[RMDB]
RNA sequence: GGGAACGACUCGAGUAGAGUCGAAAAGGAGAGAUAUUAAAAGAGACCAUGAGUGGAGGAUGGGCGUGAAGAUGAACGAAUAACAGAACGAUGCUUCUGCUACACUGGAUCGAGUAAACGUUCUGCACGAACAUGAGAAGUUCGCUUCUCAUGUUCGAAAAGAAACAACAACAACAAC
Reactivity to DMS in 0.01 (KOAc 150mM, MgCl2 10mM, bicine 150mM(pH8.5), 24C), signal-to-noise 4, nucleotides 027 to 126: g000g000a110g000a090g000a100u020a070u010u010a070a040a070a070g030a100g010a040c090c060a080u020g020a110g000u010g000g030a070g000g010a100u030g040g010g000c070g000u010g000a050a100g020a080u010g000a060a090c100g020a080a060u040a090a110c060a030g010a030a050c030g040a110u020g010c070u000u000c020u000g000c030u020a040c130a120c090u000g000g000a130u000c060g020a050g010u000a050a020a240c050g010u000u000c000u000g010c170a200
Reactivity to 2A3 in 0.01 (KOAc 150mM, MgCl2 10mM, bicine 150mM(pH8.5), 24C), signal-to-noise 6, nucleotides 027 to 126: g060g010a020g010a020g020a030u060a050u160u300a140a090a070a020g090a030g020a020c020c040a030u070g060a020g040u070g000g020a030g020g020a060u070g060g000g000c060g020u040g020a040a030g060a110u090g020a070a040c100g030a080a060u140a110a030c080a040g060a040a000c030g050a060u080g020c020u020u090c020u070g060c050u110a070c050a020c070u060g060g030a080u070c020g000a000g020u080a040a110a040c010g000u010u000c010u020g010c040a040
Overview:
The record gives the reactivity of an RNA of 177 nucleotides to DMS and 2A3. The RNA was probed in 150 mM KOAc, 10 mM MgCl2 and 150 mM bicine (pH 8.5) at 24 C.